[RMDB]
This 177-nucleotide RNA was probed chemically with 2A3 and DMS. 2A3 adducts were read by reverse transcription with SuperScript II with manganese. Conditions: 150 mM KOAc, 10 mM MgCl2 and 150 mM bicine (pH 8.5), 24 C.
RNA sequence: GGGAACGACUCGAGUAGAGUCGAAAAAGCGUUCAGGUAACCCCUUUACGUGAUGCAUUUGUCCACUCUUGCACAGAAUGGAAUCAUGUUAAACUUACAGUGCAAGAAAGUAAGUUAACCCAUUUAAGAUAUAAAUUUAGUUCGCUAAAUUUAUAUCAAAAGAAACAACAACAACAAC
Reactivity to 2A3 in 0.01 (KOAc 150mM, MgCl2 10mM, bicine 150mM(pH8.5), 24C), signal-to-noise 3, nucleotides 027 to 126: a000g030c000g020u020u030c020a010g030g010u040a080a080c000c070c000c000u000u000u050a000c020g020u040g010a040u130g050c040a070u080u070u230g080u050c000c020a070c020u010c000u000u090g000c050a030c010a050g120a140a110u110g030g050a070a050u080c030a050u110g030u080u070a030a030a010c000u000u020a010c010a030g010u010g060c010a020a000g020a030a010a000g000u000a000a010g000u030u040a040a060c010c000c000a050u150u190u050a050a020
Reactivity to DMS in 0.01 (KOAc 150mM, MgCl2 10mM, bicine 150mM(pH8.5), 24C), signal-to-noise 4, nucleotides 027 to 126: a200g030c030g020u010u000c090a060g020g010u000a230a140c210c150c030c020u000u000u000a010c010g020u000g010a060u000g010c110a080u000u000u010g010u000c030c030a120c050u000c000u000u000g000c050a040c050a040g010a200a080u010g020g000a070a050u000c130a040u010g010u010u010a040a050a030c010u000u000a010c010a070g010u000g010c070a030a040g000a030a040a030g000u010a000a010g000u000u000a080a150c010c040c010a140u000u000u000a090a220